RNA sequence: GGGAACGACUCGAGUAGAGUCGAAAAUUUGGACUGAGUGUUGCUCAGGGAUGAACAGGGACAGCAGAGGCAGAGAAGGGCUUGACAGUGGAGAUGACAGCAGCACCAACAUCAGCAGCAGCAGCAGGAAUGAAAUAGGUUUCGACCUAUUUCAUUCAAAAGAAACAACAACAACAAC
Reactivity to DMS in 0.01 (KOAc 150mM, MgCl2 10mM, bicine 150mM(pH8.5), 24C), signal-to-noise 8, nucleotides 027 to 126: u000u000u010g020g000a170c030u010g000a070g020u000g010u000u010g000c030u010c050a070g010g000g010a080u000g010a080a090c110a080g010g000g010a070c090a050g020c080a060g010a100g010g010c050a050g010a090g010a100a090g010g000g010c080u000u000g010a060c080a060g010u000g010g000a080g000a070u000g000a080c100a040g010c050a050g010c060a070c050c050a050a070c090a050u000c070a050g000c050a050g010c040a050g010c060a050g010c070a090g000
Reactivity to 2A3 in 0.01 (KOAc 150mM, MgCl2 10mM, bicine 150mM(pH8.5), 24C), signal-to-noise 5, nucleotides 027 to 126: u080u040u140g060g030a010c020u030g020a010g100u080g040u150u210g040c020u020c060a040g030g030g010a040u090g020a060a040c040a070g040g010g060a020c020a030g010c020a010g030a030g060g000c020a000g010a010g020a120a050g020g010g010c010u040u050g040a020c010a040g030u050g040g050a060g010a040u070g030a020c020a020g000c010a000g010c010a010c020c020a030a050c010a060u080c030a000g020c010a000g000c000a000g020c010a010g010c020a010g070